[RMDB]
RNA sequence: GGGAACGACUCGAGUAGAGUCGAAAAGUGAAUGGAUUAGGAAAGGAAUAGUGGCUCAGGAAAGGAGAGAUGCCUGAGUCUGCUGUUUCAUUCUUAGGAACCAUUGGUGUCUCCUGCCACAGGUACCUUCAAGAGUCAUACUCACCUACAGGGUCACGAUGGAGGCAUCUUUCGAGAUGCCUCCAUCAAAAGAAACAACAACAACAAC
Reactivity to 2A3 in 0.01 (KOAc 150mM, MgCl2 10mM, bicine 150mM(pH8.5), 24C), signal-to-noise 2, nucleotides 027 to 156: g100u050g060a040a030u020g010g030a010u020u040a040g010g000a010a060a010g010g010a020a000u000a030g010u020g000g000c010u000c000a000g040g020a120a300a090g140g080a130g010a050g000a090u210g030c000c000u000g000a000g000u040c000u000g020c000u000g000u000u000u000c000a020u010u000c000u010u000a030g050g000a110a130c010c000a020u050u060g050g000u030g050u050c010u000c050c000u020g040c040c010a100c010a070g010g020u070a070c040c000u050u100c090a100a050g010a020g000u030c020a050u120a120c020u040c000a050c040c000u080a050c010a020g000g010g010u030c010a000c100
Chemical mapping of a 207-nucleotide RNA with 2A3. 2A3 adducts were read by reverse transcription with SuperScript II with manganese. Conditions: 150 mM KOAc, 10 mM MgCl2 and 150 mM bicine (pH 8.5), 24 C.